[RMDB]
RNA sequence: GGGAACGACUCGAGUAGAGUCGAAAACACGCCAACUACCACUCGCGCACUCGGCUGCACGGCACACCCAAGUGCGCGCUAUCGCUGCCAGCAGCCAGCCGCCGCAACCGUGCCGGCCAGGGAGCGAAAUUUAGCGAUACUUCGGUAUCGCUAAAUUAAAAGAAACAACAACAACAAC
Reactivity to DMS in 0.01 (KOAc 150mM, MgCl2 10mM, bicine 150mM(pH8.5), 24C), signal-to-noise 5, nucleotides 027 to 126: c080a160c100g020c030c050a060a100c080u040a160c040c040a100c080u010c040g030c020g010c060a040c010u000c040g000g020c060u000g000c040a090c050g020g000c100a130c140a080c130c030c050a090a040g030u020g000c020g020c100g040c120u000a030u020c080g020c050u000g000c040c080a140g000c070a090g020c010c080a090g010c020c010g000c080c020g000c110a070a120c110c020g020u020g020c020c030g030g000c030c060a160g030g030g010a150g010c020g000a050
Reactivity to 2A3 in 0.01 (KOAc 150mM, MgCl2 10mM, bicine 150mM(pH8.5), 24C), signal-to-noise 7, nucleotides 027 to 126: c080a010c030g080c020c010a070a050c040u140a100c020c040a070c060u050c000g020c010g000c020a030c010u030c030g020g000c020u040g000c040a040c070g050g000c070a010c010a030c040c030c010a050a020g050u050g030c010g000c010g000c000u050a020u150c020g010c020u050g080c030c030a060g030c010a010g010c150c000a000g010c010c010g020c020c020g060c030a050a030c020c020g050u090g020c040c010g020g010c000c010a060g020g000g040a030g000c010g040a030
The record gives the reactivity of an RNA of 177 nucleotides to DMS and 2A3.
It was measured as part of the RMDB library OK1LIB.
Values cover nucleotides 27 to 126.
Conditions: 150 mM KOAc, 10 mM MgCl2 and 150 mM bicine (pH 8.5), 24 C.